[RMDB]
RNA sequence: GGGAACGACUCGAGUAGAGUCGAAAAGAUAUGGAUCUCAGCAAGGACCCAGCGAAGUAUCGGAAACGAUACUAAGCUGCUGAUGACCUGAGAUCCUAAGUCGGACCCAUUCGUUCGCGAAUGGGAAGCUAGUCAUGAAGUUCGCUUCAUGACUAGCAAAAGAAACAACAACAACAAC
Reactivity to DMS in 0.01 (KOAc 150mM, MgCl2 10mM, bicine 150mM(pH8.5), 24C), signal-to-noise 3, nucleotides 027 to 126: g000a000u000a300u010g000g010a020u000c000u000c000a000g000c020a080a090g000g010a120c130c290c040a000g030c010g010a300a050g000u010a010u000c010g020g000a110a080a130c010g000a000u010a000c000u010a000a300g010c000u010g020c160u010g000a050u000g000a250c300c000u010g000a010g000a010u010c000c000u010a010a070g000u000c010g000g000a130c010c000c000a010u000u000c000g020u000u020c260g040c030g000a010a010u000g000g000g020a020a020
Reactivity to 2A3 in 0.01 (KOAc 150mM, MgCl2 10mM, bicine 150mM(pH8.5), 24C), signal-to-noise 3, nucleotides 027 to 126: g010a020u040a020u120g000g010a000u000c000u010c000a020g030c090a130a120g080g050a120c030c120c020a010g000c000g010a060a000g000u000a000u010c000g010g030a080a020a020c010g000a010u000a010c010u010a020a030g010c010u030g020c050u090g090a220u140g050a040c010c020u010g000a000g000a010u020c000c000u020a060a010g020u000c020g030g030a070c010c010c000a000u000u000c020g090u030u030c300g000c000g140a000a000u010g000g020g000a000a000
This 177-nucleotide RNA was probed chemically with DMS and 2A3. The RNA was probed in 150 mM KOAc, 10 mM MgCl2 and 150 mM bicine (pH 8.5) at 24 C. For DMS, 1,987 sequencing reads were counted. Reactivities are given for positions 27 through 126. For 2A3, 6,596 sequencing reads were counted. Source: RMDB library TTRDEL, as collected in RNAgym.